[RMDB]
RNA sequence: GGGAACGACUCGAGUAGAGUCGAAAAAAUUAUGGUUCACAAGUCGAACAAAAUAUUGAGCACUCAAUUUAUCAACAAUUAGAUAAACGCUAAUGGAAAGAAAAUGAUACGAACCUUAUUUUUUGUACCUAUUAAAUGCAUUCGUGCAUUUAAUAGGAAAAGAAACAACAACAACAAC
Reactivity to 2A3 in 0.01 (KOAc 150mM, MgCl2 10mM, bicine 150mM(pH8.5), 24C), signal-to-noise 5, nucleotides 027 to 126: a000a000u220u140a080u100g000g000u000u000c000a020c020a150a070g060u020c030g070a110a050c050a060a120a040a010u170a030u060u150g080a020g040c060a040c100u130c030a060a170u040u060u050a080u050c010a010a110c010a150a140u100u090a070g020a030u050a110a110a020c090g000c010u030a000a010u060g050g050a210a050a030g030a020a140a060a040u170g020a030u030a090c070g000a000a000c000c000u010u000a010u020u020u000u000u020u080g050u020a040
Reactivity to DMS in 0.01 (KOAc 150mM, MgCl2 10mM, bicine 150mM(pH8.5), 24C), signal-to-noise 4, nucleotides 027 to 126: a010a000u010u000a010u000g010g020u000u000c010a140c160a090a200g000u010c020g010a110a070c160a090a060a070a090u010a060u000u000g010a060g030c100a120c200u000c110a070a060u000u000u010a060u000c030a110a130c110a090a060u000u000a080g010a030u010a060a060a110c220g000c030u000a020a010u000g000g010a150a080a090g010a020a040a060a050u000g010a040u010a120c180g000a010a020c010c000u000u000a000u000u000u010u000u000u000g020u010a140